An RNA of 177 nucleotides, treated with DMS and 2A3 and read out base by base.

RNA sequence: GGGAACGACUCGAGUAGAGUCGAAAAUGUUAUCGUGUUGUGAGGCAAAAAGCAGAAAGCCCCGAAGUUAAUUCUCAUUAACCACGAGGCUUGAUCUGUAUGCCUAGACAACAUCAGAUUAGCCGCUUACACACACACAAUUCGUUGUGUGUGUGUAAAAAGAAACAACAACAACAAC
Reactivity to DMS in 0.01 (KOAc 150mM, MgCl2 10mM, bicine 150mM(pH8.5), 24C), signal-to-noise 4, nucleotides 027 to 126: u010g010u000u010a030u010c030g000u000g000u000u000g000u010g010a030g000g000c000a050a050a090a160a180g000c010a010g000a080a060a020g000c000c010c020c020g010a190a160g000u000u000a010a000u010u040c300u030c190a040u000u000a010a010c000c080a300c020g000a120g020g000c000u000u000g030a100u010c000u000g000u000a070u010g010c000c010u000a030g000a020c020a010a020c000a010u000c140a070g000a040u000u000a070g020c020c080g000c200u000
Reactivity to 2A3 in 0.01 (KOAc 150mM, MgCl2 10mM, bicine 150mM(pH8.5), 24C), signal-to-noise 5, nucleotides 027 to 126: u130g020u070u040a010u030c020g000u000g000u010u000g010u000g030a010g000g000c000a030a030a030a120a070g000c010a000g000a010a010a000g000c000c000c000c000g010a060a010g010u000u000a010a030u210u140c110u020c220a020u000u000a000a010c010c010a050c060g000a020g000g000c000u010u060g050a140u070c000u000g010u020a020u060g000c010c000u020a050g060a020c000a000a000c000a000u030c040a020g000a020u040u040a030g050c030c020g030c030u000
The reactions ran in a buffer of 150 mM KOAc, 10 mM MgCl2 and 150 mM bicine (pH 8.5), at 24 C.